Overview:
The record gives the reactivity of an RNA of 207 nucleotides to 2A3. For 2A3 the reverse transcriptase was SuperScript II with manganese. The data come from the RNA Mapping Database (RMDB), library OK3TST. The RNA was probed in 150 mM KOAc, 10 mM MgCl2 and 150 mM bicine (pH 8.5) at 24 C.
RNA sequence: GGGAACGACUCGAGUAGAGUCGAAAAGUCAUGCCUUCGGGCAUGACAGGUACCGAGAGGUACCAAAUAGCGUACAGGAGACUCAGACUGUACGCUAAAAAAGUGUGUGUUCAAUAAGACCCAAUUGAACACACACUAAAAUGGGUCAAGGGUGUCACUGCCUAAUGGUAUUCGUACCAUUAGGCAGAAAAGAAACAACAACAACAAC
Reactivity to 2A3 in 0.01 (KOAc 150mM, MgCl2 10mM, bicine 150mM(pH8.5), 24C), signal-to-noise 1, nucleotides 027 to 156: g000u000c020a020u010g000c000c000u020u040c240g090g010g000c000a000u000g000a000c020a000g000g020u000a000c010c020g020a040g000a010g040g000u000a010c010c020a000a000a010u060a000g000c000g000u000a000c010a000g010g020a040g040a080c000u010c020a010g000a060c020u000g010u000a000c000g000c010u020a130a000a000a000a000a000g000u000g000u010g000u010g000u000u000c010a000a000u030a130a070g030a100c010c040c030a000a020u000u000g010a000a000c000a000c000a000c000a000c010u000a000a000a000a030u010g000g010g020u010c080a090a140g160g010g020u060g020u040c030a020